[RMDB]
RNA sequence: GGGAACGACUCGAGUAGAGUCGAAAAACUAAGACGGUGCCGGGAGCGGAUCCCCUAAGUGUGAGUGUCUUCGGCAUUAUCCUGUCUUGCUUGAUCAAUGACGCAAUCUUCGAGCGUACGAUGAUUGCACGCCGGAAUAGUUCGCUAUUCCGGCGUGAAAAGAAACAACAACAACAAC
Reactivity to 2A3 in 0.01 (KOAc 150mM, MgCl2 10mM, bicine 150mM(pH8.5), 24C), signal-to-noise 1, nucleotides 027 to 126: a030c070u090a070a020g040a010c030g100g000u040g010c010c000g000g000g020a010g070c030g000g240a170u040c060c040c020c000u160a150a040g090u120g030u040g150a030g030u070g110u020c000u140u090c020g000g040c000a010u020u120a070u070c010c000u040g000u000c000u060u030g030c000u130u080g030a050u110c030a070a040u160g030a070c140g050c040a010a020u020c010u050u050c040g110a120g110c110g060u040a070c030g000a000u050g000a030u000u050g010
Reactivity to DMS in 0.01 (KOAc 150mM, MgCl2 10mM, bicine 150mM(pH8.5), 24C), signal-to-noise 2, nucleotides 027 to 126: a130c090u010a070a050g010a030c050g020g040u000g020c020c010g010g010g000a120g010c030g010g000a130u010c010c040c070c120u030a080a110g040u010g020u000g020a180g020u000g000u010c000u000u010c010g010g000c020a050u000u010a070u000c050c020u020g010u000c010u000u010g010c160u000u000g000a100u000c100a070a110u000g000a070c100g020c000a030a020u000c040u000u000c020g020a190g000c250g000u010a100c010g000a040u000g010a020u000u010g010
Structure probing data (2A3 and DMS) for a 177-nucleotide construct. It was measured as part of the RMDB library OK2TST. The RNA was probed in 150 mM KOAc, 10 mM MgCl2 and 150 mM bicine (pH 8.5) at 24 C. For 2A3, 783 sequencing reads were counted. DMS adducts were read by reverse transcription with MarathonRT. DMS (dimethyl sulfate) methylates the pairing face of unpaired adenines and cytosines.